Chemical mapping of a 207-nucleotide RNA with DMS and 2A3. It was measured as part of the RMDB library OK3TST. For 2A3 the reverse transcriptase was SuperScript II with manganese. The 2A3 profile rests on 3,056 reads.
[RMDB]
RNA sequence: GGGAACGACUCGAGUAGAGUCGAAAAGAACGUGGGUACCGCAAAUGUCACAACCAUGAAUCUCCUCAACCUCAACGUGACGAGUACCGCCAACUUUGCAAGUGCAAAUUUCGCCUCAGCAAACAUCGCCAACAUCUACACGACCAACAUCGUCGGGGAUACAGGCGGAAUUCGUUCCGCCUGUAUCAAAAGAAACAACAACAACAAC
Reactivity to DMS in 0.01 (KOAc 150mM, MgCl2 10mM, bicine 150mM(pH8.5), 24C), signal-to-noise 1, nucleotides 027 to 156: g020a090a020c110g010u000g030g030g030u010a040c060c010g000c060a070a040a130u030g030u010c010a120c060a110a080c060c060a120u120g000a090a110u010c080u000c010c100u000c100a100a070c010c010u000c000a080a050c020g020u000g000a000c070g000a150g030u000a000c020c040g040c000c030a040a150c080u000u030u000g000c000a050a100g000u010g000c000a070a120a180u000u010u000c030g020c000c000u000c020a150g010c030a000a030a010c040a130u010c050g020c010c010a030a050c100a020u000c030u000a060c000a000c000g000a010c010c000a030a100c100a020u010c100g010u010c050g000g000g020
Reactivity to 2A3 in 0.01 (KOAc 150mM, MgCl2 10mM, bicine 150mM(pH8.5), 24C), signal-to-noise 5, nucleotides 027 to 156: g070a060a010c050g030u080g040g040g000u050a050c040c020g030c120a050a080a120u160g040u070c020a030c060a100a080c080c010a040u120g090a080a060u090c040u050c050c010u060c010a050a040c010c030u060c050a050a050c090g030u050g030a030c030g000a030g010u010a030c010c020g010c020c010a040a050c070u090u040u060g020c020a080a140g030u050g110c020a030a100a200u070u110u090c070g000c010c000u040c030a010g000c010a020a060a080c050a090u070c040g020c060c020a050a060c030a090u020c010u120a040c050a030c050g030a010c040c070a070a050c020a180u140c030g050u040c020g030g010g030